[RMDB]
RNA sequence: GGGAACGACUCGAGUAGAGUCGAAAAUAUACCGUCUCUAUCUAAUGGAUUAAUUUCCGGAUCUACAUUUUCUAUCGGUGGCGUUAUACAUCUUAGUUGUAAAAGUGGUUUUAUACUAACGGGAUCUCCAUCAUCCACAUGUAUCGACGGUAAAUGGUCUGAUUCAGUUUUUCGAAACUGAAUCAGAAAAAGAAACAACAACAACAAC
Reactivity to 2A3 in 0.01 (KOAc 150mM, MgCl2 10mM, bicine 150mM(pH8.5), 24C), signal-to-noise 3, nucleotides 027 to 156: u230a000u020a020c010c000g040u000c020u000c020u040a160u070c030u100a180a090u070g000g010a030u080u120a090a090u110u140u050c030c030g020g020a090u000c040u080a040c020a050u000u110u060u150c030u040a070u140c060g050g000u010g030g000c060g090u160u160a100u050a120c020a030u000c010u070u070a100g020u090u090g120u120a060a000a060a000g040u050g040g070u050u080u050u140a100u070a050c040u010a100a000c000g000g000g020a010u000c070u020c060c020a060u070c010a050u030c030c000a030c010a090u050g040u030a040u100c040g000a000c010g000g030u040a040a010a040u090g040g010
Reactivity to DMS in 0.01 (KOAc 150mM, MgCl2 10mM, bicine 150mM(pH8.5), 24C), signal-to-noise 2, nucleotides 027 to 156: u000a140u000a020c050c000g000u000c010u000c070u000a070u000c080u010a170a060u000g000g000a070u010u010a060a140u010u000u000c030c020g000g000a080u010c050u000a040c020a060u000u000u000u000c040u010a050u000c070g020g040u000g000g010c100g040u010u010a070u000a050c000a040u010c040u010u010a060g000u000u010g020u000a050a040a060a100g030u030g010g010u000u000u000u020a070u010a100c150u000a070a100c060g010g030g010a020u000c060u000c010c010a050u000c040a080u010c030c020a060c070a090u000g000u000a040u000c060g000a010c000g020g030u000a030a070a080u000g010g000